[RMDB]
RNA sequence: GGGAACGACUCGAGUAGAGUCGAAAAGCCCAGUAUUCGUACUGGGCAAAAAGAUAUGGAACAUGACCCUCCUAUGUGUGCCUUUGAUCUCGGAAACGAGGGAGGCACAUAAUAGGAGCAUGUUCCUAAGUCAAAAACUGACCAUUCGUGGUCAGAACAUAGAAGAUCAAUUCGUUGAUCUUCUAUGAAAAGAAACAACAACAACAAC
Reactivity to DMS in 0.01 (KOAc 150mM, MgCl2 10mM, bicine 150mM(pH8.5), 24C), signal-to-noise 3, nucleotides 027 to 156: g020c000c010c000a030g030u000a030u000u000c300g040u000a010c010u000g010g020g020c000a000a010a020a050a040g010a100u000a230u000g010g020a030a000c000a020u000g000a230c100c180c000u000c000c000u000a020u000g030u000g010u000g000c000c000u000u010u000g000a060u010c010u000c010g020g000a200a110a280c000g010a010g010g020g000a020g010g020c000a000c000a000u000a010a030u000a020g000g010a020g100c000a000u010g000u000u000c010c000u000a000a070g000u010c050a080a080a090a130a110c010u000g000a030c000c000a090u000u020c220g050u010g030g000u000c010a010g010a080a160
Reactivity to 2A3 in 0.01 (KOAc 150mM, MgCl2 10mM, bicine 150mM(pH8.5), 24C), signal-to-noise 8, nucleotides 027 to 156: g000c000c000c000a000g000u010a020u040u120c300g020u020a010c000u000g000g010g010c030a020a020a040a000a030g060a030u100a040u110g000g000a010a000c010a010u100g060a190c090c030c010u010c010c000u010a010u000g010u000g000u000g010c000c010u150u230u090g110a140u080c000u000c010g030g040a140a080a070c010g000a010g000g010g000a000g000g010c010a000c000a000u010a020a020u000a000g000g000a000g000c000a000u000g000u000u000c000c000u000a070a010g030u000c030a000a000a030a120a210c010u010g000a000c000c010a040u070u100c290g130u090g010g000u000c000a000g010a020a000
Structure probing data (DMS and 2A3) for a 207-nucleotide construct. Conditions: 150 mM KOAc, 10 mM MgCl2 and 150 mM bicine (pH 8.5), 24 C. It was measured as part of the RMDB library RNAMAK.